[RMDB]
RNA sequence: GGGAACGACUCGAGUAGAGUCGAAAAUCUGGCCCAAGGUGAAGGCAUUCCUGCAGUCGCUGCCGUCUGGGGCUCUGCUGGCGGACGUGGGUUGUGGCAAUGGCAAAUACUUUGGCGUGCGCCCAGACGAUUACGUAUCCUUCGGGAUACGUAAUCGAAAAGAAACAACAACAACAAC
Reactivity to DMS in 0.01 (KOAc 150mM, MgCl2 10mM, bicine 150mM(pH8.5), 24C), signal-to-noise 2, nucleotides 027 to 126: u000c080u000g000g000c030c000c010a050a080g010g020u000g010a150a220g010g010c000a090u000u000c230c010u000g020c040a030g040u000c050g000c040u010g000c070c020g010u000c030u020g000g020g000g000c060u010c080u000g020c050u000g000g010c020g020g010a050c050g000u000g000g000g010u000u010g020u000g010g010c130a040a060u010g000g010c010a060a080a130u020a030c040u000u000u010g010g020c110g000u000g020c090g000c030c000c000a090g000a160
Reactivity to 2A3 in 0.01 (KOAc 150mM, MgCl2 10mM, bicine 150mM(pH8.5), 24C), signal-to-noise 2, nucleotides 027 to 126: u030c040u080g090g000c000c000c000a000a010g100g010u050g020a060a050g080g040c020a010u000u060c000c040u010g020c030a000g030u060c020g000c130u030g010c030c020g030u000c040u100g130g000g070g030c110u040c030u190g040c000u030g020g000c020g020g000a030c010g030u040g100g020g010u060u030g040u030g050g000c040a040a060u030g110g030c000a030a080a090u140a060c000u020u040u030g070g020c060g060u080g130c010g010c040c000c000a000g010a050